[RMDB]
RNA sequence: GGGAACGACUCGAGUAGAGUCGAAAACUGCCGCCGGGACGCAGUGAUCCCCGCAGGGUCGCACGGUCGCCUCGGGUCGGCCUCGUGUCGGCUCGACCUGCGAGGGGAGCGAGUGGCGAGCCCGACCAAAACUUUCUCGCCUUCGGGCGAGAAAGAACCAUAAUAAGAGGUUCGCCUCUUAUUAUGGAAAAGAAACAACAACAACAAC
Reactivity to DMS in 0.01 (KOAc 150mM, MgCl2 10mM, bicine 150mM(pH8.5), 24C), signal-to-noise 1, nucleotides 027 to 156: c030u000g010c020c040g030c010c060g020g040g040a140c030g030c030a170g010u020g000a060u000c000c010c020c040g000c030a110g000g000g030u000c040g020c040a100c010g010g000u010c020g020c040c020u000c010g020g030g030u000c000g020g020c010c010u000c150g000u010g000u010c120g030g030c000u000c010g020a060c030c000u000g010c020g020a040g000g000g020g020a090g010c030g000a170g020u010g010g020c000g010a120g000c000c020c000g050a070c050c030a040a140a200a170c000u000u000u000c020u000c010g000c010c000u000u000c300g030g020g020c020g020a000g000a010a010a000g000a040a120
Reactivity to 2A3 in 0.01 (KOAc 150mM, MgCl2 10mM, bicine 150mM(pH8.5), 24C), signal-to-noise 5, nucleotides 027 to 156: c020u030g020c020c030g070c060c040g090g040g080a060c030g000c000a060g090u010g040a050u020c000c000c000c020g030c030a040g020g010g040u100c020g000c040a060c070g050g110u080c030g100c060c030u020c010g020g000g000u010c000g010g020c000c010u090c090g290u300g070u060c030g010g000c030u050c050g020a040c000c000u050g040c010g010a080g000g000g010g000a020g030c020g010a100g080u110g030g020c010g010a050g040c010c030c010g000a030c010c020a050a050a020a070c000u000u000u000c000u000c000g010c010c020u040u050c200g080g000g000c000g000a000g000a010a000a000g000a000a010
Chemical mapping of a 207-nucleotide RNA with DMS and 2A3. DMS adducts were read by reverse transcription with MarathonRT. Conditions: 150 mM KOAc, 10 mM MgCl2 and 150 mM bicine (pH 8.5), 24 C. The 2A3 profile rests on 5,877 reads. Values cover nucleotides 27 to 156. The data come from the RNA Mapping Database (RMDB), library M2RFPK.